An RNA of 207 nucleotides, treated with 2A3 and DMS and read out base by base. The reactions ran in a buffer of 150 mM KOAc, 10 mM MgCl2 and 150 mM bicine (pH 8.5), at 24 C.
RNA sequence: GGGAACGACUCGAGUAGAGUCGAAAAGCGUACUACUACGCGAACAGGAUCUUGGAUUUAUGGUUCUCUAGCGUGUGAUUUCCCAAAUAGGAAAUCAUCGGGACCAUUGUCAGAUCCUGGGAGCGUAGUAUCGCAAACGGAAUCUUCGGAUUCCGAAGAAUCAGAUGAACUUCGGUUCAUCUGAUUCAAAAGAAACAACAACAACAAC
Reactivity to 2A3 in 0.01 (KOAc 150mM, MgCl2 10mM, bicine 150mM(pH8.5), 24C), signal-to-noise 6, nucleotides 027 to 156: g000c010g050u090a070c020u000a000c000u000a000c010g000c000g010a040a010c000a000g000g010a000u000c040u140u260g160g000a080u240u300u140a040u090g060g010u110u010c120u030c100u200a120g130c110g110u190g020u020g070a000u000u000u020c020c030c000a180a250a030u280a090g000g000a000a000a000u000c000a000u040c030g010g000g010a000c000c000a010u000u010g020u000c000a000g000a000u000c000c000u000g000g000g000a010g000c000g000u010a000g000u000a000u020c010g000c000a000a070a030c010g000g000a000a000u000c010u020u050c200g070g000a000u000u000c000c000g010a050a020
Reactivity to DMS in 0.01 (KOAc 150mM, MgCl2 10mM, bicine 150mM(pH8.5), 24C), signal-to-noise 2, nucleotides 027 to 156: g000c010g030u020a030c170u000a000c000u000a040c040g010c000g000a300a300c030a020g030g000a010u000c010u000u000g030g010a060u000u000u000a000u010g000g040u000u000c000u000c050u000a180g040c260g040u000g050u000g010a060u000u000u020c000c000c000a070a130a220u020a070g030g010a000a010a020u000c000a020u000c010g010g020g000a010c000c020a010u000u000g010u000c010a070g000a010u010c000c010u000g000g000g010a300g010c000g030u010a010g010u000a010u010c000g000c020a060a050a170c050g000g050a040a000u000c020u000u000c300g120g000a110u000u010c030c000g000a030a060
Source information:
2A3 adducts were read by reverse transcription with SuperScript II with manganese. Reactivities are given for positions 27 through 156.